[RMDB]
RNA sequence: GGGAACGACUCGAGUAGAGUCGAAAACCGUAGCUAGCAGACAAUUCAGUCCCAGUACUCGGCAAGCGUGAUGGGGCUUGCUUUCAGCGCUCUUCAGAUCUCUGAAAAGAGUCGGUGCAUUCAUUAAACGGAAUCGUGUGUUCGCACACGAUUCCGUAAAAGAAACAACAACAACAAC
Reactivity to 2A3 in 0.01 (KOAc 150mM, MgCl2 10mM, bicine 150mM(pH8.5), 24C), signal-to-noise 1, nucleotides 027 to 126: c010c020g000u020a030g010c040u060a010g000c030a030g060a150c010a080a050u100u070c020a000g040u020c000c000c000a000g030u000a050c020u030c120g070g000c020a230a000g010c030g100u070g020a120u010g000g000g000g040c060u020u110g000c000u050u050u000c100a030g000c050g020c000u130c080u000u030c000a000g020a300u040c010u000c010u080g020a000a060a020a020g020a000g000u020c000g000g020u040g000c010a060u000u110c010a020u040u140a060a030

The record gives the reactivity of an RNA of 177 nucleotides to 2A3. For 2A3, 555 sequencing reads were counted. The reactions ran in a buffer of 150 mM KOAc, 10 mM MgCl2 and 150 mM bicine (pH 8.5), at 24 C. For 2A3 the reverse transcriptase was SuperScript II with manganese.